RNA sequence: GGGAACGACUCGAGUAGAGUCGAAAACCGUAGGGACACCACAUGUUGAUGACCAUACAUGAUAAUUAUUUCGAAAGAGAUAAUUGUUUGUGUAUGCAAGACAUGGGUGUCCCUAAACGGAAACUUUGGUAUCAGUGUUCGCACUGAUACCAAAGAAGAUAAGACAUUCGUUCGCGAAUGUCUUAUCAAAAGAAACAACAACAACAAC
Reactivity to DMS in 0.01 (KOAc 150mM, MgCl2 10mM, bicine 150mM(pH8.5), 24C), signal-to-noise 2, nucleotides 027 to 156: c010c000g040u010a040g020g020g010a050c000a000c000c010a150c010a010u010g020u000u000g020a110u010g010a180c300c010a030u000a000c000a010u000g020a010u010a010a010u000u000a010u000u000u000c000g010a210a120a250g010a020g020a010u000a000a010u000u000g020u000u000u000g060u000g010u000a000u000g000c000a050a150g000a000c010a020u010g010g010g020u000g000u000c000c010c000u000a000a020a020c010g000g000a130a080a050c000u010u000u000g010g010u000a010u010c000a010g000u000g030u000u010c300g060c020a030c010u010g010a000u000a000c000c020a000a000a010g000a080a130
Reactivity to 2A3 in 0.01 (KOAc 150mM, MgCl2 10mM, bicine 150mM(pH8.5), 24C), signal-to-noise 2, nucleotides 027 to 156: c020c000g010u030a020g010g010g020a010c010a000c010c010a160c020a270u000g010u000u020g060a300u080g020a050c040c000a000u000a000c000a000u010g020a000u010a000a000u000u010a010u000u010u000c010g050a130a070a070g000a030g000a010u010a020a010u010u010g040u080u030u180g020u000g000u000a010u010g030c000a020a100g000a000c000a000u000g000g000g010u010g010u000c000c000c000u000a000a000a000c000g030g000a110a050a040c000u010u000u000g000g000u010a010u000c010a000g000u000g060u120u140c220g030c120a010c000u000g000a000u000a000c000c010a000a000a000g000a000a000